[RMDB]
About this RNA
An RNA of 177 nucleotides, treated with 2A3 and read out base by base. The RNA was probed in 150 mM KOAc, 10 mM MgCl2 and 150 mM bicine (pH 8.5) at 24 C. It was measured as part of the RMDB library OK1LIB.
RNA sequence: GGGAACGACUCGAGUAGAGUCGAAAAUGAUGCUGACGCUGGCAUGGAGCCGGUUUCUAUGGGGACUGCUCUGGAGAGCAGGAUUGUGGGUGUUAGCCUGGAUCCUAUGUCCACUGAUGCUGGCCUGCAGGGAGCGCAGUUUCGACUGCGCUCCCUGAAAAGAAACAACAACAACAAC
Reactivity to 2A3 in 0.01 (KOAc 150mM, MgCl2 10mM, bicine 150mM(pH8.5), 24C), signal-to-noise 1, nucleotides 027 to 126: u080g150a060u100g000c000u070g000a000c120g000c070u000g070g020c010a130u120g040g000a050g000c000c020g000g040u020u020u000c050u080a120u060g230g000g000g000a050c000u000g010c000u000c000u060g300g060a300g000a000g250c010a000g000g000a000u000u230g080u050g120g010g000u140g120u110u070a110g000c000c000u070g060g090a000u130c000c000u000a120u240g060u170c010c010a060c120u000g010a000u050g020c000u000g010g000c000c000u070g000